Source: RMDB library M2PK50, as collected in RNAgym. Structure probing data (2A3 and DMS) for a 177-nucleotide construct. Values cover nucleotides 27 to 126.
RNA sequence: GGGAACGACUCGAGUAGAGUCGAAAAGGCGACAAGUUCGCUUGUCGCCACGGGGUCCAGCCUGGAAAGGCUGGAGGUAUUGGAAUGGUCGGCCCGCCAUUCAACGCGGGACAUUCGUGUCCCGCAAGAGGAGUAAAUUGUUCGCAAUUUACUCCUCAAAAGAAACAACAACAACAAC
Reactivity to 2A3 in 0.01 (KOAc 150mM, MgCl2 10mM, bicine 150mM(pH8.5), 24C), signal-to-noise 5, nucleotides 027 to 126: g000g000c010g010a010c010a000a000g010u040u060c140g050c130u010u000g000u000c010g000c000c000a000c030g040g000g010g010u010c000c000a000g010c000c010u060g110g120a180a090a020g010g000c010u000g000g030a010g040g010u180a140u140u300g110g010a010a010u010g000g030u050c040g120g020c000c000c000g000c010c000a000u010u000c020a030a010c080g000c000g000g000g010a010c010a010u040u050c190g040u020g000u030c000c000c000g000c000a000a000
Reactivity to DMS in 0.01 (KOAc 150mM, MgCl2 10mM, bicine 150mM(pH8.5), 24C), signal-to-noise 3, nucleotides 027 to 126: g020g020c000g010a000c000a010a010g010u000u020c220g030c000u000u000g010u000c010g010c000c000a010c150g020g000g010g020u000c000c000a010g000c000c000u000g010g030a100a130a030g000g000c000u000g000g000a010g010g010u000a070u010u000g010g010a030a000u000g000g010u000c070g000g000c000c000c010g000c010c010a010u000u000c020a120a090c220g010c000g010g000g010a010c000a020u000u000c170g000u000g000u000c000c000c000g020c010a010a010
Notes:
DMS adducts were read by reverse transcription with MarathonRT.